[RMDB]
RNA sequence: GGGAACGACUCGAGUAGAGUCGAAAAUGCAGCCGUGUCAAAUUCAGUACCUGUCCUAUGCAUGGUAGGCACUGGCCCAGAAGGCUGCCACAGAAACACUGUGACUCAUGGGCCCUGUUCCUGUGUCAAAUACGUCGUGAUUCGUCACGACGUAUUUAAAAGAAACAACAACAACAAC
Reactivity to 2A3 in 0.01 (KOAc 150mM, MgCl2 10mM, bicine 150mM(pH8.5), 24C), signal-to-noise 7, nucleotides 027 to 126: u080g000c000a010g000c010c010g060u080g090u120c090a040a060a110u170u050c010a020g010u020a040c010c010u060g140u210c020c040u190a160u270g110c080a050u150g070g000u010a010g010g000c030a020c020u040g010g000c000c000c000a020g030a070a010g030g020c020u010g000c000c000a010c000a000g170a040a210a010c110a020c090u020g020u020g040a030c010u020c090a090u050g000g000g030c020c010c010u080g010u020u020c020c000u060g010u030g080u160c050
Reactivity to DMS in 0.01 (KOAc 150mM, MgCl2 10mM, bicine 150mM(pH8.5), 24C), signal-to-noise 6, nucleotides 027 to 126: u020g020c020a010g020c000c000g020u000g000u020c110a060a060a080u030u020c020a010g020u000a050c000c000u000g010u010c010c030u000a130u050g030c300a070u010g010g000u000a010g010g000c030a010c010u000g010g000c030c010c000a170g010a120a100g000g010c010u000g000c010c070a010c020a010g000a140a110a120c240a140c040u000g010u010g000a150c060u010c070a120u010g000g000g000c010c010c050u000g000u010u010c000c000u000g010u020g000u010c120
The record gives the reactivity of an RNA of 177 nucleotides to 2A3 and DMS. For DMS the reverse transcriptase was MarathonRT. The reactions ran in a buffer of 150 mM KOAc, 10 mM MgCl2 and 150 mM bicine (pH 8.5), at 24 C. For 2A3 the reverse transcriptase was SuperScript II with manganese.